Chemical mapping of a 177-nucleotide RNA with DMS and 2A3. The reactions ran in a buffer of 150 mM KOAc, 10 mM MgCl2 and 150 mM bicine (pH 8.5), at 24 C. The data come from the RNA Mapping Database (RMDB), library TTRDES. The DMS profile rests on 1,152 reads. For 2A3 the reverse transcriptase was SuperScript II with manganese. For DMS the reverse transcriptase was MarathonRT.

[RMDB]
RNA sequence: GGGAACGACUCGAGUAGAGUCGAAAAGAUAUGGACCUAUAGUGAGUGAUGACCUACAUCGGAAACGAUGUAGCAAGCUCCUAUGAGGUCCUAAGUCAAAACAACAAAUCGUUCGCGAUUUGUUGAAUCUUGAAGUUCUCUUCGGAGAACUUCAAGAAAAAGAAACAACAACAACAAC
Reactivity to DMS in 0.01 (KOAc 150mM, MgCl2 10mM, bicine 150mM(pH8.5), 24C), signal-to-noise 2, nucleotides 027 to 126: g010a010u010a300u020g000g010a000c000c000u000a030u000a010g030u060g010a040g030u000g010a080u010g000a250c300c000u000a020c010a000u000c000g010g020a080a020a190c010g010a040u000g000u010a010g000c020a080a130g000c000u000c000c000u010a020u010g000a030g050g020u000c010c020u000a000a130g010u000c000a090a100a100a250c000a010a000c000a010a010a000u000c010g010u000u000c300g010c040g000a010u000u000u000g000u000u000g020a060a030
Reactivity to 2A3 in 0.01 (KOAc 150mM, MgCl2 10mM, bicine 150mM(pH8.5), 24C), signal-to-noise 2, nucleotides 027 to 126: g000a000u080a060u210g000g000a000c000c010u030a020u010a030g300u300g120a020g010u070g170a300u090g040a100c050c050u020a020c010a000u000c000g050g010a070a070a040c010g020a010u000g010u000a000g020c000a050a210g030c010u000c030c030u040a000u130g300a060g000g000u000c000c000u010a020a000g000u000c030a010a010a220a300c000a020a010c000a000a000a030u000c020g030u050u050c250g020c030g150a000u000u070u000g020u020u000g010a030a040